The data come from the RNA Mapping Database (RMDB), library OK3TST. The record gives the reactivity of an RNA of 207 nucleotides to DMS and 2A3. For 2A3, 3,729 sequencing reads were counted. The RNA was probed in 150 mM KOAc, 10 mM MgCl2 and 150 mM bicine (pH 8.5) at 24 C.
RNA sequence: GGGAACGACUCGAGUAGAGUCGAAAAUGACGUCAAAUCAUCAUGCCCCUUAUGCUUAGGGCUACACACGUGCUACAAUGGGUAGUACAGAGGGUUGCCAAGCCGUAAGGUGGAGCUAAUCCCUUAAAGCUACUCUCAGUUCGGAUUGUAGGCUGAAUCGAGUAUAUUACUUCGGUAAUAUACUCGAAAAAGAAACAACAACAACAAC
Reactivity to DMS in 0.01 (KOAc 150mM, MgCl2 10mM, bicine 150mM(pH8.5), 24C), signal-to-noise 2, nucleotides 027 to 156: u010g020a060c030g030u000c090a130a110a160u010c040a030u000c010a070u010g000c030c030c000c030u010u030a120u000g000c030u000u000a090g030g020g010c010u000a020c030a060c180a180c080g000u000g020c020u000a050c040a160a160u000g010g010g040u000a020g030u010a050c070a300g010a100g020g030g000u000u000g000c000c030a050a270g000c220c030g040u000a060a120g000g010u020g020g010a120g000c030u000a070a100u000c010c020c010u010u000a010a110a160g020c010u000a020c020u000c010u000c070a140g040u020u010c040g000g010a150u000u000g040u000a030g000g020c000u000g010a100a290
Reactivity to 2A3 in 0.01 (KOAc 150mM, MgCl2 10mM, bicine 150mM(pH8.5), 24C), signal-to-noise 5, nucleotides 027 to 156: u040g020a010c060g060u150c080a020a000a120u040c010a040u010c030a050u170g020c010c000c010c010u090u120a070u160g030c020u040u110a080g010g050g030c010u050a010c040a010c010a010c010g010u010g010c010u040a030c070a100a270u140g070g060g000u010a010g040u040a010c020a010g050a010g020g020g020u020u060g000c000c010a030a020g000c010c000g040u060a060a030g030g010u080g060g040a020g000c020u100a080a100u130c000c010c000u000u060a090a080a020g010c000u000a010c000u000c010u030c050a060g030u070u060c010g050g030a090u090u020g010u030a050g070g070c010u020g050a020a070

Description: The DMS profile rests on 3,971 reads.